RNA sequence: GGGAACGACUCGAGUAGAGUCGAAAAGAAAAGAGCGUAAUCGCGUCUUGACGUGAGUGAGACUAGACUGUAGGCUAUCCCAAGUGGGAUAGCAUAACUCACAAUACGCUGAUCUACAGUCAAAAGACAGUGAUGACUAUUUCGAUAGUCAUCACUGAAAAGAAACAACAACAACAAC
Reactivity to 2A3 in 0.01 (KOAc 150mM, MgCl2 10mM, bicine 150mM(pH8.5), 24C), signal-to-noise 9, nucleotides 027 to 126: g180a010a080a010a000g030a000g000c000g010u020a040a040u060c010g000c000g030u020c100u170u280g130a020c010g010u010g010a020g000u000g000a000g010a020c040u040a060g000a000c000u010g010u000a000g010g000c000u000a000u020c000c000c020a090a120g300u300g040g000g000a000u000a000g000c000a000u010a000a010c000u000c000a000c000a000a020u040a010c000g000c000u030g020a100u030c000u000a000c000a000g000u000c010a050a040a000a000g100a020
Reactivity to DMS in 0.01 (KOAc 150mM, MgCl2 10mM, bicine 150mM(pH8.5), 24C), signal-to-noise 5, nucleotides 027 to 126: g010a100a110a060a070g000a090g010c000g000u010a050a300u000c000g010c000g010u000c090u030u020g010a040c000g040u000g000a040g000u030g000a010g000a260c120u030a120g020a030c000u000g000u000a000g010g000c000u000a000u000c000c000c010a300a160g020u020g000g000g000a000u010a010g000c000a010u010a020a070c020u000c000a020c000a160a110u010a010c010g030c010u000g000a100u030c000u000a000c000a000g000u020c010a100a060a080a080g020a210
Structure probing data (2A3 and DMS) for a 177-nucleotide construct. For DMS, 11,256 sequencing reads were counted. For 2A3, 23,608 sequencing reads were counted. Conditions: 150 mM KOAc, 10 mM MgCl2 and 150 mM bicine (pH 8.5), 24 C. For DMS the reverse transcriptase was MarathonRT.